Record summary:
Structure probing data (2A3) for a 207-nucleotide construct. The RNA was probed in 150 mM KOAc, 10 mM MgCl2 and 150 mM bicine (pH 8.5) at 24 C. The 2A3 profile rests on 1,591 reads.

RNA sequence: GGGAACGACUCGAGUAGAGUCGAAAACGCUGCCUAAUUAGCAGCUAGCGAACUCUCAUAGGAGUGUCAGCCCGGGGCUGUUCCCGACCCGGAUCCUGGCAUCGACUAGGGGACUAAACCUUGAUCCCGGUCACGGGGUGAAGAGGGAAACCAAACACUCGAAGUAUUUGUUCGCAAAUACUUCGAGAAAAGAAACAACAACAACAAC
Reactivity to 2A3 in 0.01 (KOAc 150mM, MgCl2 10mM, bicine 150mM(pH8.5), 24C), signal-to-noise 2, nucleotides 027 to 156: c080g000c000u000g020c010c010u120a150a090u100u150a050g000c000a000g010c010u020a030g030c010g030a040a020c010u000c000u000c040a070u060a020g050g000a050g040u020g010u010c000a000g010c000c010c010g010g000g000g000c100u170g040u040u010c030c000c020g030a030c000c010c000g000g000a010u130c010c000u000g000g010c010a060u160c060g060a060c000u030a020g000g030g000g020a000c030u110a090a080a040c010c000u010u050g030a020u010c000c010c000g010g090u220c140a080c140g030g000g000g000u050g100a060a040g020a060g040g010g010a080a020a020c040c020a080a080a060c050a020